[RMDB]
RNA sequence: GGGAACGACUCGAGUAGAGUCGAAAACCCAGCUAGAUUCUGUGUUCGUGUCACCGGCCACCCACGUCCGAGGGUUAUGUGGCUUAUCAACGGUCACACUGUCGUUCAUGGCUCUCGUUACAAGCUAUCCAAAAUCCCUAUUCGUAGGGAUUUUGGAAAAAGAAACAACAACAACAAC
Reactivity to 2A3 in 0.01 (KOAc 150mM, MgCl2 10mM, bicine 150mM(pH8.5), 24C), signal-to-noise 1, nucleotides 027 to 126: c000c010c000a010g080c040u090a060g020a220u190u020c030u050g090u050g080u080u060c060g010u080g090u090c030a050c060c040g000g020c000c030a030c010c000c000a050c040g060u000c020c020g030a060g010g040g000u050u040a040u070g010u030g010g020c000u010u050a190u120c050a020a050c060g000g000u000c000a000c000a010c050u060g020u080c010g000u040u080c000a030u040g060g000c000u000c000u040c050g060u120u140a020c000a050a000g000c020u050a070
Reactivity to DMS in 0.01 (KOAc 150mM, MgCl2 10mM, bicine 150mM(pH8.5), 24C), signal-to-noise 3, nucleotides 027 to 126: c010c000c010a160g030c110u000a110g020a090u000u000c060u000g030u000g020u000u000c080g010u000g030u000c040a100c070c070g010g010c030c040a080c050c040c030a040c160g000u000c170c030g000a070g010g000g020u000u000a060u010g020u000g000g010c010u000u000a300u010c160a100a100c140g000g000u000c000a020c010a010c040u000g030u000c010g020u000u000c030a100u000g000g000c030u000c000u010c040g000u000u000a110c120a090a110g000c120u000a090